[RMDB]
RNA sequence: GGGAACGACUCGAGUAGAGUCGAAAACAAGGACGGCAACACUGUGGUUGUGUGCACCUGCGCUGCUGUCUCGUCCAUGGUCACAGGUGUGCUGGUGGGGCUGCUGGCUCUAGGGGAGAGGAUGCCAUCACACCAUUCUGUUCGCAGAAUGGUGUGAAAAAGAAACAACAACAACAAC
Reactivity to DMS in 0.01 (KOAc 150mM, MgCl2 10mM, bicine 150mM(pH8.5), 24C), signal-to-noise 3, nucleotides 027 to 126: c160a080a110g020g000a020c030g000g020c030a060a040c040a060c090u030g030u010g010g010u000u000g010u010g020u000g020c050a040c040c040u000g010c100g010c110u000g010c040u010g010u000c030u010c100g010u010c050c030a060u010g020g020u010c060a060c080a060g000g010u000g030u000g020c030u000g000g000u010g000g020g000g000c030u000g020c100u010g000g010c030u010c060u000a070g010g020g010g000a130g000a110g000g000a100u000g000c080c070a170
Reactivity to 2A3 in 0.01 (KOAc 150mM, MgCl2 10mM, bicine 150mM(pH8.5), 24C), signal-to-noise 1, nucleotides 027 to 126: c010a010a050g050g050a070c010g030g030c060a060a060c060a030c100u110g020u090g120g030u070u090g040u060g050u080g140c020a040c020c030u040g000c070g050c100u160g010c070u020g030u080c050u060c080g010u000c020c000a110u050g030g000u060c040a020c000a030g070g040u020g020u020g090c020u070g000g000u100g000g100g000g010c020u080g010c040u040g050g000c020u050c010u070a050g000g020g000g020a080g000a010g030g020a050u090g000c000c020a040